RNA sequence: GGGAACGACUCGAGUAGAGUCGAAAACUGCAACUUAGUUCGCUAAGUUGCAGAAAAGACUCGGCUUGCUGAGGUGCACACGGCAAGAGGCGAGAAGAAAAGACCUGCCAACUUCGGUUGGCAGGUCGAUAUAAAGAUACUUCGGUAUCUUUAUAUCAAAAGAAACAACAACAACAAC
Reactivity to 2A3 in 0.01 (KOAc 150mM, MgCl2 10mM, bicine 150mM(pH8.5), 24C), signal-to-noise 1, nucleotides 027 to 126: c000u000g000c000a000a000c000u000u020a000g000u040u050c130g020c110u000a010a000g010u020u010g000c000a000g000a000a020a010a000g040a020c000u000c000g020g060c020u010u000g020c000u030g030a060g100g050u140g000c020a030c010a010c090g010g000c000a000a010g010a030g100g170c030g020a010g030a100a050g050a030a150a000a000g000a020c000c030u000g000c010c000a010a000c020u040u060c110g090g000u010u000g040g000c020a000g000g000u000c010
Reactivity to DMS in 0.01 (KOAc 150mM, MgCl2 10mM, bicine 150mM(pH8.5), 24C), signal-to-noise 2, nucleotides 027 to 126: c000u000g000c010a020a020c000u000u000a000g020u000u020c210g010c010u000a000a010g010u000u000g010c000a010g000a020a020a160a210g000a070c010u000c000g010g010c000u000u010g000c010u000g010a060g010g030u010g000c110a070c070a160c020g000g020c010a010a010g000a120g000g010c000g000a020g000a130a120g000a070a090a130a170g000a010c000c020u000g000c000c000a010a010c000u000u020c190g000g000u010u000g000g030c000a010g000g010u000c000